Chemical mapping of a 177-nucleotide RNA with 2A3 and DMS. The RNA was probed in 150 mM KOAc, 10 mM MgCl2 and 150 mM bicine (pH 8.5) at 24 C.

RNA sequence: GGGAACGACUCGAGUAGAGUCGAAAAGUGCCACACCCAAAGCCCAUUGCCCCACGUCGGAAACACUAGAAGGACACCUGUUCACCAGGACCCAUGAUCACAGGGUGGUCAAGGCAAUUGUGGCAGGCUAGCUAAAUCAGUUCGCUGAUUUAGCUAGAAAAGAAACAACAACAACAAC
Reactivity to 2A3 in 0.01 (KOAc 150mM, MgCl2 10mM, bicine 150mM(pH8.5), 24C), signal-to-noise 4, nucleotides 027 to 126: g070u060g030c010c010a030c000a030c010c040c000a120a040a020g010c000c010c020a050u020u060g020c020c000c000c000a050c030g070u060c020g060g090a130a120a000c070a050c080u120a080g070a190a030g090g020a020c050a160c080c010u040g040u210u240c080a050c130c010a060g000g000a030c010c000c010a070u100g030a020u020c010a020c020a110g170g030g040u030g020g000u030c040a000a030g010g000c000a000a040u080u070g020u060g000g010c000a000g000g040
Reactivity to DMS in 0.01 (KOAc 150mM, MgCl2 10mM, bicine 150mM(pH8.5), 24C), signal-to-noise 6, nucleotides 027 to 126: g010u000g010c000c000a060c070a120c050c020c020a110a090a150g010c020c000c050a080u010u000g000c010c010c020c050a100c160g010u000c060g010g000a130a080a100c110a090c090u010a090g020a120a110g020g000a060c120a150c020c020u000g000u010u010c160a070c140c030a030g000g010a160c130c010c040a130u000g010a060u000c050a050c100a150g000g020g000u000g000g000u000c050a110a100g000g000c020a020a090u010u000g030u010g010g010c020a050g020g000
Values cover nucleotides 27 to 126. It was measured as part of the RMDB library OK2TRN.